This 177-nucleotide RNA was probed chemically with DMS. It was measured as part of the RMDB library OK2TST. Values cover nucleotides 27 to 126. For DMS, 832 sequencing reads were counted. The RNA was probed in 150 mM KOAc, 10 mM MgCl2 and 150 mM bicine (pH 8.5) at 24 C.
RNA sequence: GGGAACGACUCGAGUAGAGUCGAAAAGAGCUAGGUCCACCAACAGGGCUGUUUGCACAGUUGUACGAAAAGAGGAUGCAGGUGAAUAGCGAGGCGAUGAUCCGAGAGGAUGAAGAAGCACUUGGCAGGACUGGUCCAUAUUCGUAUGGACCAGUCCAAAAGAAACAACAACAACAAC
Reactivity to DMS in 0.01 (KOAc 150mM, MgCl2 10mM, bicine 150mM(pH8.5), 24C), signal-to-noise 1, nucleotides 027 to 126: g000a040g000c010u000a100g000g010u020c010c030a180c040c040a140a150c100a100g010g010g010c010u010g000u000u000u020g020c100a030c110a070g010u000u000g000u020a120c160g020a010a050a060a110g000a040g000g000a040u000g020c040a090g000g000u000g000a060a060u010a070g010c110g000a010g000g030c150g000a100u000g020a120u000c000c000g050a150g000a230g000g010a050u000g020a040a060g000a100a070g020c060a100c100u000u000g010g050c080a140